[RMDB]
RNA sequence: GGGAACGACUCGAGUAGAGUCGAAAAGGGUGAUCGUUCGCGAUCACCCAAAGAAGCACGAAACGCCAAGAAAUCCCGGAACAUUGGUAUGCAAGCCUGAGAAAACUGACAAGUUCGCUUGUCAGAACACUUACAGUAUCUUCGGAUACUGUAAGUGAAAAGAAACAACAACAACAAC
Reactivity to 2A3 in 0.01 (KOAc 150mM, MgCl2 10mM, bicine 150mM(pH8.5), 24C), signal-to-noise 4, nucleotides 027 to 126: g000g000g000u000g000a010u010c010g020u060u060c150g010c000g100a000u010c000a010c000c000c000a000a000a000g010a020a000g020c020a000c020g080a110a200a040c070g010c000c020a040a010g060a050a130a030u040c000c010c000g020g030a060a020c040a100u040u110g010g010u060a040u120g010c020a070a060g040c010c020u070g000a080g060a080a100a040a090c000u000g000a000c000a000a010g020u020u040c140g020c110u010u000g000u000c000a000g010a010a010
Reactivity to DMS in 0.01 (KOAc 150mM, MgCl2 10mM, bicine 150mM(pH8.5), 24C), signal-to-noise 6, nucleotides 027 to 126: g000g020g020u000g000a000u000c000g020u000u010c220g020c010g010a010u000c000a010c000c000c000a010a030a080g000a110a110g010c040a060c110g010a080a100a110c130g010c010c040a050a070g000a090a110a120u000c010c020c030g010g000a050a060c080a110u000u010g010g010u010a050u000g010c070a070a100g010c030c020u010g000a110g000a060a080a090a110c010u000g010a010c000a000a010g010u000u010c210g020c010u000u000g000u010c000a000g000a080a120